[RMDB]
RNA sequence: GGGAACGACUCGAGUAGAGUCGAAAACGGCAACCUCGGCGGCUACAUCGCGGUCAUCUUCUACAACUCCGAAGACGGAUCGGUCAUCGCGGUGACUCUGAACAACUUCUCGGCCCACGCCGAUGCGGUCGAUCUGUUCUAUCAGAUCGCGUACCUGCUAUGCACCCUUGUUCGCAAGGGUGCAUAGAAAAGAAACAACAACAACAAC
Reactivity to 2A3 in 0.01 (KOAc 150mM, MgCl2 10mM, bicine 150mM(pH8.5), 24C), signal-to-noise 4, nucleotides 027 to 156: c040g040g010c010a020a070c010c020u010c000g040g000c010g020g030c020u050a030c040a060u050c020g000c030g040g030u000c010a020u010c010u180u010c010u120a110c070a200a090c100u080c090c030g080a110a070g100a130c050g060g010a040u070c060g030g020u030c040a040u030c000g020c020g010g020u040g040a080c030u050c030u140g040a100a020c040a070a060c140u130u090c050u040c080g050g000c000c050c070a070c060g010c020c030g010a000u030g020c050g070g060u110c000g000a010u000c000u020g060u180u100c070u110a130u300c000a020g000a000u010c010g000c010g020u030a060c000c010u000g020
Reactivity to DMS in 0.01 (KOAc 150mM, MgCl2 10mM, bicine 150mM(pH8.5), 24C), signal-to-noise 1, nucleotides 027 to 156: c060g030g010c050a070a080c030c020u010c030g040g000c000g010g000c080u000a110c010a110u020c020g010c000g010g100u000c040a040u010c050u030u000c020u000a130c080a090a090c120u020c040c110g050a110a100g010a110c020g030g010a040u000c020g010g030u000c050a040u000c040g020c000g050g020u000g000a030c030u010c000u000g010a010a100c040a060a130c180u000u010c010u020c020g050g010c040c030c060a110c060g030c040c030g020a060u000g030c080g000g040u000c010g020a010u000c030u000g000u000u010c140u000a120u010c010a020g020a010u000c010g020c070g030u000a060c050c010u000g020